[RMDB]
RNA sequence: GGGAACGACUCGAGUAGAGUCGAAAAUGUCUUAACAGGUUGGGCUGUAGGGUACAUUAUGCUGGCCUGCCCACUCCAAGUUGAGAGUUGGGCCAUGGGAUUUGGGCGAAGGCUCAGAUCUCCUGGUCACUAGAACGGAGGGAUCCGCAUGAGGCUGCUAUUGGAAUAGCUUCGGCUAUUCCAAUAGAAAAGAAACAACAACAACAAC
Reactivity to 2A3 in 0.01 (KOAc 150mM, MgCl2 10mM, bicine 150mM(pH8.5), 24C), signal-to-noise 2, nucleotides 027 to 156: u090g020u020c010u060u060a050a020c000a020g000g050u030u060g070g020g000c040u100g140u300a060g030g010g060u120a100c030a070u090u200a100u220g100c110u050g000g000c000c010u010g010c000c010c000a040c020u000c000c000a110a160g050u140u080g050a030g020a010g040u220u170g030g010g000c010c010a030u030g020g000g000a000u010u000u000g010g010g010c070g110a190a060g260g020c000u000c000a000g000a000u000c010u040c000c010u010g010g010u010c000a020c020u050a030g030a050a030c010g010g040a000g000g040g030a070u020c020c020g030c030a050u100g050a040g090g000c030u060g030
Reactivity to DMS in 0.01 (KOAc 150mM, MgCl2 10mM, bicine 150mM(pH8.5), 24C), signal-to-noise 1, nucleotides 027 to 156: u010g020u000c020u000u010a120a090c040a130g010g050u010u000g040g000g040c050u020g010u000a120g030g020g050u000a060c090a100u000u010a080u010g030c160u000g040g000c020c000u020g010c030c010c020a060c020u000c010c010a100a190g020u050u000g000a080g020a070g000u010u000g020g010g020c010c040a000u000g010g000g010a080u010u000u010g010g010g020c030g000a180a130g000g070c000u010c000a030g010a010u000c000u000c000c010u000g020g020u000c020a080c070u010a070g020a120a060c080g010g000a070g060g020g010a140u000c030c080g050c000a100u000g000a130g000g010c020u000g020
Overview:
Structure probing data (2A3 and DMS) for a 207-nucleotide construct. The RNA was probed in 150 mM KOAc, 10 mM MgCl2 and 150 mM bicine (pH 8.5) at 24 C. For 2A3 the reverse transcriptase was SuperScript II with manganese. Values cover nucleotides 27 to 156.